[RMDB]
RNA sequence: GGGAACGACUCGAGUAGAGUCGAAAAGAUAUGGACACAACGAUAAGCACAAGUUCGGAAACGAACUCGUGCUUUUGACGUGUGUCCUAAGUCAAAAGUGAAACCCCUGUUCGCAGGGGUUUCACAAGCCUAGUAAUCCGUUCGCGGAUUACUAGGCAAAAGAAACAACAACAACAAC
Reactivity to DMS in 0.01 (KOAc 150mM, MgCl2 10mM, bicine 150mM(pH8.5), 24C), signal-to-noise 1, nucleotides 027 to 126: g010a070u010a300u000g000g020a020c000a020c000a020a040c010g000a230u010a000a000g020c010a010c000a010a010g010u010u000c010g040g010a070a110a170c000g000a000a010c000u000c020g040u000g010c000u000u000u000u000g000a200c300g000u000g000u000g010u000c000c000u000a000a080g030u000c050a100a040a130a110g010u010g000a030a010a010c000c000c000c020u000g060u010u020c230g010c040a010g010g010g010g000u000u000u000c010a000c000a010a030
This 177-nucleotide RNA was probed chemically with DMS.
The data come from the RNA Mapping Database (RMDB), library TTRDEL.